Notes
Structure probing data (2A3 and DMS) for a 177-nucleotide construct. The 2A3 profile rests on 1,724 reads.

[RMDB]
RNA sequence: GGGAACGACUCGAGUAGAGUCGAAAAGAUCACAUGUGGACUUUUAUUUCCAGUGAAAUCAGUUACUCUUCAGUUAAGCCUUUGGAAACAGCUCGACUUUAAAAAGCUCCAAAUGCAGCUUUAAAAAACAGGUAAGAAGAUUCGUCUUCUUACCUGUAAAAGAAACAACAACAACAAC
Reactivity to 2A3 in 0.01 (KOAc 150mM, MgCl2 10mM, bicine 150mM(pH8.5), 24C), signal-to-noise 2, nucleotides 027 to 126: g020a080u060c020a000c020a090u120g060u180g080g000a010c020u150u110u100u090a130u080u060u000c020c000a020g020u030g060a070a070a020u070c000a030g030u030u040a070c040u020c000u090u070c050a000g030u020u070a080a010g000c000c000u070u180u070g060g020a080a180a000c010a030g020c000u000c010g070a080c000u000u100u070a130a300a050a000a000g000c000u030c020c000a120a100a090u080g000c040a000g000c000u080u120u210a050a090a010a090a000
Reactivity to DMS in 0.01 (KOAc 150mM, MgCl2 10mM, bicine 150mM(pH8.5), 24C), signal-to-noise 3, nucleotides 027 to 126: g000a150u000c030a040c050a110u020g020u000g010g010a050c100u010u000u010u000a110u020u010u000c030c020a110g020u000g010a060a070a060u000c060a100g030u000u000a050c060u000c040u000u000c050a080g010u010u000a050a070g010c010c000u000u000u020g010g000a120a070a150c180a060g000c030u000c080g010a080c100u000u000u010a060a090a090a060a030g000c020u000c050c070a030a040a090u000g010c120a020g000c030u000u000u000a000a060a040a060a050
2A3 adducts were read by reverse transcription with SuperScript II with manganese. The RNA was probed in 150 mM KOAc, 10 mM MgCl2 and 150 mM bicine (pH 8.5) at 24 C. For DMS the reverse transcriptase was MarathonRT.